RNA sequence: GGGAACGACUCGAGUAGAGUCGAAAACAUAUGCAUUUUAACACAUCAACUAUAACACCUUUAUUUAAGUCUGUUGUGGACCAUAGAAUAUGGUAAAUUACAACAAGCAAAAUAAAGUUAUAUAUGCCAACAGACGUAAGUUCGCUUACGUCUGUUGAAAAGAAACAACAACAACAAC
Reactivity to 2A3 in 0.01 (KOAc 150mM, MgCl2 10mM, bicine 150mM(pH8.5), 24C), signal-to-noise 3, nucleotides 027 to 126: c020a060u180a070u170g040c040a050u000u040u050u210a140a030c050a000c010a120u140c040a020a150c070u070a050u040a200a010c030a090c030c010u000u030u000a030u010u030u020a130a010g040u000c010u020g010u010u010g010u000g030g030a010c000c000a000u010a050g300a300a140u190a060u080g000g000u050a080a140a090u130u090a000c000a000a000c000a000a040g000c000a000a000a000a080u010a010a010a010g000u050u020a040u020a000u010a020u100g050c010
Reactivity to DMS in 0.01 (KOAc 150mM, MgCl2 10mM, bicine 150mM(pH8.5), 24C), signal-to-noise 2, nucleotides 027 to 126: c100a090u000a050u000g030c060a030u000u000u010u020a060a120c070a120c130a070u000c110a070a120c140u010a040u000a050a050c090a110c240c060u010u000u000a000u000u000u000a090a090g000u020c030u000g000u000u020g020u000g010g030a000c000c000a020u010a090g010a170a120u000a030u000g000g000u010a020a060a110u000u000a000c000a000a010c000a000a060g000c000a120a040a010a000u000a000a000a020g000u010u000a040u020a060u010a030u010g010c200